[RMDB]
RNA sequence: GGGAACGACUCGAGUAGAGUCGAAAAGAGUCACUGCAAAAGCAGUAAGAAGGUGCUAAUGGACUGGGCACGAGGGACCGAGAGGUGGAACGGGACCACCCAAGCAGCUUGCUCUUGCUACGGGUGAAUCAGAGUCGAUUUUCGAAUCGACUCUGAUAAAAGAAACAACAACAACAAC
Reactivity to DMS in 0.01 (KOAc 150mM, MgCl2 10mM, bicine 150mM(pH8.5), 24C), signal-to-noise 2, nucleotides 027 to 126: g000a050g000u000c100a020c000u020g000c010a050a090a150a120g030c030a010g000u000a110a090g010a090a040g000g050u010g000c030u010a080a070u010g000g000a080c050u000g020g010g000c050a040c070g000a150g030g000g000a070c120c070g000a130g000a070g010g060u000g030g020a140a090c110g000g000g000a100c070c010a000c060c020c050a080a080g000c020a060g000c090u010u000g010c090u010c100u000u000g010c010u000a150c110g000g000g000u000g000a070
Reactivity to 2A3 in 0.01 (KOAc 150mM, MgCl2 10mM, bicine 150mM(pH8.5), 24C), signal-to-noise 1, nucleotides 027 to 126: g070a000g090u100c040a000c090u040g040c000a090a160a300a200g000c000a000g010u100a020a020g190a030a010g030g040u010g040c050u080a050a170u080g010g030a040c040u030g000g040g060c020a020c050g040a090g000g000g040a040c010c030g030a030g000a040g050g030u060g010g040a040a070c040g010g000g060a040c020c010a000c030c000c010a010a000g000c010a020g040c000u130u140g030c010u020c000u080u110g000c000u010a050c100g060g030g010u040g020a010